Conditions: 150 mM KOAc, 10 mM MgCl2 and 150 mM bicine (pH 8.5), 24 C. Structure probing data (DMS) for a 177-nucleotide construct.

RNA sequence: GGGAACGACUCGAGUAGAGUCGAAAAUGAAACAUGGUUACCAUAACCUAUGGCACAAGGUAGCCAUGAAAAGUGCCAUAGGAUAUAAAGCUGAGCGUUAGGAAAAACCUAAUGCUCAGCAAAAAAAACUUAAGAUUACGUUCGCGUAAUCUUAAGUAAAAGAAACAACAACAACAAC
Reactivity to DMS in 0.01 (KOAc 150mM, MgCl2 10mM, bicine 150mM(pH8.5), 24C), signal-to-noise 2, nucleotides 027 to 126: u010g000a140a060a120c100a030u000g000g020u000u000a150c000c020a140u000a090a070c030c010u000a030u000g010g000c010a020c030a110a090g030g000u010a050g000c030c040a030u010g000a010a040a060a120g020u000g010c000c020a030u000a040g020g010a130u050a010u030a030a090a090g000c000u000g010a000g010c000g010u000u000a000g000g000a040a180a070a180a120c000c010u010a000a010u000g000c040u000c000a000g000c000a000a000a000a020a010a000a030
For DMS, 2,215 sequencing reads were counted. It was measured as part of the RMDB library M2PK90. DMS adducts were read by reverse transcription with MarathonRT.